[RMDB]
The data come from the RNA Mapping Database (RMDB), library OK1LIB. An RNA of 177 nucleotides, treated with 2A3 and DMS and read out base by base.

RNA sequence: GGGAACGACUCGAGUAGAGUCGAAAAAUGGUCACUGAUAUGUUAGAGGGACGACUCAAUGUUUCUUCUUUGUGCACAGCUAGUCAUUAUCUGUCCCCUCUAAAGAAGAGAAUCGAAAUUCUCCUAAAAGGGGUCUAAGUUUCGACUUAGACCCCUUAAAAGAAACAACAACAACAAC
Reactivity to 2A3 in 0.01 (KOAc 150mM, MgCl2 10mM, bicine 150mM(pH8.5), 24C), signal-to-noise 1, nucleotides 027 to 126: a000u100g090g000u060c000a040c030u090g110a190u050a080u300g050u070u010a000g000a000g000g000g000a030c120g030a010c030u050c170a030a020u000g060u060u090u000c000u140u000c090u090u020u180g020u040g000c040a050c020a150g000c010u030a060g000u010c000a000u000u040a040u000c030u040g090u040c000c000c000c000u000c000u040a010a010a020g030a090a000g030a000g060a060a060u000c000g000a120a120a120u000u000c000u000c000c000u050a100a100
Reactivity to DMS in 0.01 (KOAc 150mM, MgCl2 10mM, bicine 150mM(pH8.5), 24C), signal-to-noise 2, nucleotides 027 to 126: a040u020g000g020u020c090a150c030u100g010a130u020a030u040g000u010u020a030g020a080g000g010g000a040c020g030a080c060u030c150a050a070u050g010u000u000u000c000u000u010c060u000u000u000g010u010g000c040a050c130a050g040c050u000a020g000u030c100a100u040u010a050u010c100u040g030u000c030c050c000c060u000c000u000a010a010a100g000a130a070g000a040g000a030a070u000c270g000a020a190a300u000u000c000u000c000c100u000a080a040
Source information:
For 2A3, 365 sequencing reads were counted. Conditions: 150 mM KOAc, 10 mM MgCl2 and 150 mM bicine (pH 8.5), 24 C. The DMS profile rests on 1,888 reads.